[RMDB]
RNA sequence: GGGAACGACUCGAGUAGAGUCGAAAACAUCAGCGACACACUGCUUGACACAUAUUGCGAGAAGCACCUCGCAUUUGCGGGUUCUCUUAAGCAAAAUACUUGCAUUAGGUCCCAGCUGGGCUGUGCAAUCAAGGGUUGUGUUCGCACAACCCUUGAUAAAAGAAACAACAACAACAAC
Reactivity to 2A3 in 0.01 (KOAc 150mM, MgCl2 10mM, bicine 150mM(pH8.5), 24C), signal-to-noise 4, nucleotides 027 to 126: c050a060u150c040a020g020c010g050a010c000a000c000a010c110u060g010c000u020u070g060a020c010a000c000a090u090a030u150u070g000c000g000a020g020a150a010g050c040a020c000c010u090c040g000c010a040u030u010u160g010c040g010g020g000u140u010c070u000c000u020u080a070a010g000c040a010a030a070a030u170a100c040u020u010g000c000a080u000u140a070g010g020u060c000c010c030a030g060c090u150g010g020g000c020u030g000u030g040c010a000
Reactivity to DMS in 0.01 (KOAc 150mM, MgCl2 10mM, bicine 150mM(pH8.5), 24C), signal-to-noise 3, nucleotides 027 to 126: c080a160u010c060a070g010c030g000a100c060a030c140a090c130u000g000c020u010u000g000a090c110a040c080a050u040a060u010u000g030c020g000a120g010a050a090g010c140a050c090c000u000c010g010c000a130u030u030u000g030c080g000g000g010u000u000c050u000c020u010u020a040a060g000c020a040a010a140a080u020a060c150u000u000g000c050a040u030u000a090g020g000u010c020c020c000a180g000c080u000g010g000g050c020u030g000u000g000c050a060

The record gives the reactivity of an RNA of 177 nucleotides to 2A3 and DMS. 2A3 is a SHAPE reagent: it acylates the 2'-hydroxyl of flexible nucleotides of all four kinds. The data come from the RNA Mapping Database (RMDB), libraries RFM100 and RFMREP. 2A3 adducts were read by reverse transcription with SuperScript II with manganese.